Description
Structure probing data (DMS) for a 177-nucleotide construct. For DMS, 1,112 sequencing reads were counted. Reactivities are given for positions 27 through 126.
RNA sequence: GGGAACGACUCGAGUAGAGUCGAAAAGAUAUGGAACCUGGGAAGGAUGGUCACGUUGUAGCUUGGACAUCGGAAACGAUGUAGAGAGCGCAGAUAACGUGAGCCAUCCUUCCCAGGUUCCUAAGUCGACAUUCCUUGGGUUCGCCCAAGGAAUGUCAAAAGAAACAACAACAACAAC
Reactivity to DMS in 0.01 (KOAc 150mM, MgCl2 10mM, bicine 150mM(pH8.5), 24C), signal-to-noise 1, nucleotides 027 to 126: g030a100u000a300u020g010g000a030a010c000c000u000g060g010g000a030a000g000g000a000u000g010g010u000c020a020c000g000u020u000g020u000a150g000c000u000u000g010g030a060c000a010u000c000g000g040a070a090a300c010g000a000u000g010u010a120g020a300g020a010g000c000g010c130a200g010a100u020a000a000c000g020u010g020a170g030c000c000a000u000c000c010u000u000c000c000c000a010g000g000u000u010c000c000u010a000a060g010u000c050